[RMDB]
RNA sequence: GGGAACGACUCGAGUAGAGUCGAAAACAUGGAUGCUGUGCGCGUGAAGAAGCUAUUCAUAACGCACAUGCACGGCGACCACUGCUUUGGCAUCGGCGGGCUGCUGCGCGCGGUCAGCGCGGCACGAGUUACGCUAGCGGUUCGCCGCUAGCGUAACAAAAGAAACAACAACAACAAC
Reactivity to 2A3 in 0.01 (KOAc 150mM, MgCl2 10mM, bicine 150mM(pH8.5), 24C), signal-to-noise 1, nucleotides 027 to 126: c030a060u090g060g040a050u020g000c010u010g000u000g000c000g050c010g020u030g040a090a040g020a000a050g130c160u170a200u060u060c020a030u040a230a010c020g060c010a020c040a120u150g010c000a000c000g040g000c050g030a020c000c000a020c050u120g020c000u090u050u070g060g010c040a040u030c040g000g000c020g000g030g000c010u060g000c000u030g000c000g000c060g010c010g030g020u130c080a030g000c000g000c000g050g000c010a010c050g110a150
Reactivity to DMS in 0.01 (KOAc 150mM, MgCl2 10mM, bicine 150mM(pH8.5), 24C), signal-to-noise 2, nucleotides 027 to 126: c060a100u020g000g000a150u000g020c010u000g020u000g000c010g030c060g000u000g010a120a130g010a040a080g040c220u000a100u010u000c020a020u000a210a120c060g000c000a110c220a090u000g060c010a050c000g010g010c010g000a040c010c000a100c270u000g030c070u000u020u000g000g010c100a150u000c080g010g020c020g000g000g020c100u000g010c000u000g000c000g000c040g060c070g030g010u000c200a080g030c000g010c000g010g000c000a050c220g000a150